[RMDB]
RNA sequence: GGGAACGACUCGAGUAGAGUCGAAAAUCGAUGGCGUUCGCGCCAUCGAAGAGCCGUACCGCGUACCACGCGGAUAGGAGUGAAGAUAUCCAAGGCCAUGGAGGAGGCGUGCUUUCGAGCACGCCAAACCUUAGUAACUAUUCGUAGUUACUAAGGUAAAAGAAACAACAACAACAAC
Reactivity to 2A3 in 0.01 (KOAc 150mM, MgCl2 10mM, bicine 150mM(pH8.5), 24C), signal-to-noise 8, nucleotides 027 to 126: u020c000g000a000u010g000g010c020g020u040u060c240g020c000g010c090c000a000u000c000g000a000a000g010a010g020c010c020g030u090a060c010c000g000c000g010u060a280c050c090a040c110g010c010g020g000a010u120a040g020g010a020g020u110g100a080a080g050a150u120a050u110c020c010a030a040g050g000c020c020a060u100g030g040a050g050g080a060g000g000c000g000u010g000c000u100u080u140c210g050a010g000c000a000c010g000c000c000a010a000
Reactivity to DMS in 0.01 (KOAc 150mM, MgCl2 10mM, bicine 150mM(pH8.5), 24C), signal-to-noise 8, nucleotides 027 to 126: u010c000g010a010u000g010g010c010g030u010u010c230g020c010g020c000c000a010u000c000g010a020a060g010a080g020c010c010g010u010a200c010c010g010c010g020u000a160c180c140a150c030g020c010g010g000a080u000a080g010g000a060g010u000g010a090a080g000a100u000a070u000c020c010a050a110g010g010c030c070a120u000g010g000a070g000g010a140g010g010c000g000u000g000c000u000u000u020c150g000a030g000c000a010c000g010c000c010a010a030